[RMDB]
RNA sequence: GGGAACGACUCGAGUAGAGUCGAAAAAAGUACAGCGUGGCCACAGUUGCAGUAGACAAGUCAUUGGACGAUGACCGUAUCCUUAUGAGCAAAUUUGCGAGACGGAAUCUUCGAGUCCAUCUCGGAGGGCGAUGUAGUGAUUCGUCACUACAUCGCCAAAAGAAACAACAACAACAAC
Reactivity to DMS in 0.01 (KOAc 150mM, MgCl2 10mM, bicine 150mM(pH8.5), 24C), signal-to-noise 1, nucleotides 027 to 126: a060a030g000u000a040c070a030g020c050g010u020g000g010c030c040a040c080a120g020u000u000g020c050a060g000u000a040g010a060c120a050a130g000u000c110a100u000u000g040g020a060c070g000a040u000g000a050c000c050g000u000a140u000c000c040u000u010a070u010g000a150g020c190a040a060a080u010u000u000g000c060g000a020g000a010c080g000g000a140a050u000c020u000u010c030g000a080g000u000c010c100a080u010c010u000c000g040g000a130g000
Reactivity to 2A3 in 0.01 (KOAc 150mM, MgCl2 10mM, bicine 150mM(pH8.5), 24C), signal-to-noise 1, nucleotides 027 to 126: a020a020g140u120a000c030a030g040c040g050u020g020g000c000c000a060c030a040g050u060u040g020c040a000g050u180a010g100a080c040a050a000g000u010c020a070u120u170g040g050a030c030g000a010u010g030a040c000c000g000u010a040u050c010c000u170u140a080u130g080a190g050c050a070a010a180u130u160u080g000c030g000a030g000a030c060g020g030a000a040u050c000u000u020c000g040a030g020u050c010c000a010u000c000u000c000g070g040a060g000